[RMDB]
An RNA of 207 nucleotides, treated with 2A3 and DMS and read out base by base. 2A3 adducts were read by reverse transcription with SuperScript II with manganese. Conditions: 150 mM KOAc, 10 mM MgCl2 and 150 mM bicine (pH 8.5), 24 C. Reactivities are given for positions 27 through 156. DMS adducts were read by reverse transcription with MarathonRT. For 2A3, 6,297 sequencing reads were counted.
RNA sequence: GGGAACGACUCGAGUAGAGUCGAAAAAACGUUGCAUGAUCGUAAAACAUGCCCGGCUUACCGUGAGCCGCCUUUGAAAGAAAGGUUUCCACGGACUCUGUUGCGUUACGCACGUACCUAACUUGUGAAAACGGCAUCUUGUUCGCAAGAUGCCGAACACCUACAGAAUGUUCGCAUUCUGUAGGUGAAAAGAAACAACAACAACAAC
Reactivity to 2A3 in 0.01 (KOAc 150mM, MgCl2 10mM, bicine 150mM(pH8.5), 24C), signal-to-noise 6, nucleotides 027 to 156: a000a000c000g000u010u010g000c000a000u000g010a040u220c050g050u200a100a070a000a010c000a000u000g000c000c000c000g000g000c000u010u070a100c020c010g000u000g000a000g000c000c000g020c000c010u030u000u010g070a090a050a010g030a010a010a010g000g010u000u030u030c050c000a010c010g060g010a110c050u090c050u150g120u110u040g010c000g030u060u050a060c170g030c030a000c020g020u040a050c020c040u060a100a150c040u160u130g040u060g180a040a070a030a040c000g000g010c000a000u000c000u010u020g010u060u040c060g000c070a000a000g010a000u000g000c000c000g000a000a000
Reactivity to DMS in 0.01 (KOAc 150mM, MgCl2 10mM, bicine 150mM(pH8.5), 24C), signal-to-noise 1, nucleotides 027 to 156: a120a090c010g000u000u000g030c010a010u000g000a080u020c020g020u000a070a060a020a050c030a040u010g000c000c060c020g020g000c010u000u000a110c050c020g040u000g000a050g020c030c020g000c020c020u010u010u000g000a190a090a260g000a040a020a030g010g020u020u010u000c100c010a050c010g020g000a130c190u000c040u000g020u000u000g030c010g060u000u000a100c080g020c040a070c070g000u010a030c050c050u020a100a050c030u000u000g010u000g020a100a070a090a110c010g000g020c030a010u000c000u000u000g040u000u010c300g000c030a000a010g030a010u000g020c000c000g020a010a020